Chemical mapping of a 207-nucleotide RNA with DMS and 2A3. The DMS profile rests on 2,073 reads. It was measured as part of the RMDB library OK3TST. For 2A3, 650 sequencing reads were counted. Conditions: 150 mM KOAc, 10 mM MgCl2 and 150 mM bicine (pH 8.5), 24 C.

[RMDB]
RNA sequence: GGGAACGACUCGAGUAGAGUCGAAAAUUGAUGGUAGCGGGGGAUAACGUUGACUUUAUCCCACCGAGGGGCGGGGAAACCUACCUUAAAGCCUCCUACGUCGAGGCGGAUUCAAGAACGGUUGACCUGUCAAGGAAAUGCCGAGUCUAUCUGGCGACAUAGGCAAGGUAUUCGUACCUUGCCUAUGAAAAGAAACAACAACAACAAC
Reactivity to DMS in 0.01 (KOAc 150mM, MgCl2 10mM, bicine 150mM(pH8.5), 24C), signal-to-noise 1, nucleotides 027 to 156: u010u000g060a110u010g010g000u000a050g000c010g000g030g020g020g010a090u000a000a080c080g000u020u020g000a080c090u000u000u000a040u020c010c010c010a070c030c030g010a160g020g020g000g010c000g030g020g000g050a140a030a060c010c000u000a120c130c000u000u010a050a070a300g030c010c000u000c010c060u010a080c160g000u010c100g000a020g000g060c010g020g020a150u000u000c080a050a050g030a190a100c140g000g040u000u000g010a250c020c010u000g010u000c010a070a120g070g000a030a050a120u010g030c020c000g000a160g050u010c050u010a060u000c030u000g020g020c090g000a140
Reactivity to 2A3 in 0.01 (KOAc 150mM, MgCl2 10mM, bicine 150mM(pH8.5), 24C), signal-to-noise 1, nucleotides 027 to 156: u040u090g000a000u060g000g100u090a050g080c040g000g000g000g040g000a000u000a000a000c020g040u020u150g050a030c000u020u030u020a000u050c000c000c000a030c050c000g030a040g040g010g000g000c000g000g000g000g000a030a030a030c000c000u020a090c020c000u090u040a160a000a000g010c000c000u000c040c000u160a200c100g170u280c070g010a000g000g100c140g010g000a090u090u160c060a040a030g020a030a020c030g010g000u010u010g020a030c000c000u000g020u020c010a000a060g060g010a060a160a000u170g000c040c020g010a040g070u010c120u070a040u060c080u040g020g010c000g070a000